Structure probing data (2A3 and DMS) for a 207-nucleotide construct. Source: RMDB library OK3TST, as collected in RNAgym. For 2A3 the reverse transcriptase was SuperScript II with manganese. The reactions ran in a buffer of 150 mM KOAc, 10 mM MgCl2 and 150 mM bicine (pH 8.5), at 24 C.

RNA sequence: GGGAACGACUCGAGUAGAGUCGAAAAUCUAGAUGAAUUUAAAACAUAAUGCAAGGGCAAUAAGGGGAAUGAGAUGUAACAGCCUUCUCGUAAUUAUACUGUAUGUCUUGUUAGUCUUUAGAAAACUUUAUUUUCGGCCGGGCGCGGUGGCUCACGCGCCAAGCACAGCUUUCGAGCUGUGCUUGGCAAAAGAAACAACAACAACAAC
Reactivity to 2A3 in 0.01 (KOAc 150mM, MgCl2 10mM, bicine 150mM(pH8.5), 24C), signal-to-noise 2, nucleotides 027 to 156: u040c020u040a040g020a070u050g060a090a220u070u230u220a150a120a010a000c040a070u160a050a040u140g000c030a040a020g020g000g030c000a000a080u010a080a040g010g000g020g030a010a010u170g000a060g010a020u040g070u120a100a040c000a050g050c020c000u080u050c050u000c000g030u030a020a030u090u080a110u080a130c050u070g050u150a100u050g030u010c000u020u030g010u020u060a040g020u030c020u080u130u060a080g100a090a110a050a020c050u110u140u020a130u080u040u020u050c020g020g000c010c050g040g020g000c000g000c000g010g000u070g030g020c030u020c030a010c030g040c010
Reactivity to DMS in 0.01 (KOAc 150mM, MgCl2 10mM, bicine 150mM(pH8.5), 24C), signal-to-noise 1, nucleotides 027 to 156: u010c050u010a090g030a110u020g010a160a070u000u010u000a100a150a090a110c020a130u000a060a070u000g010c060a060a090g050g020g020c020a080a130u030a060a060g010g030g030g000a020a050u010g010a040g020a030u000g000u000a060a050c080a030g030c020c090u000u000c010u000c060g010u010a050a120u010u000a180u010a100c050u020g020u000a090u010g020u000c010u000u000g010u000u030a150g000u010c010u010u000u000a080g010a070a040a030a010c050u010u010u000a120u030u000u010u000c030g030g030c040c060g040g000g060c000g010c000g020g030u010g000g020c010u000c020a070c030g000c140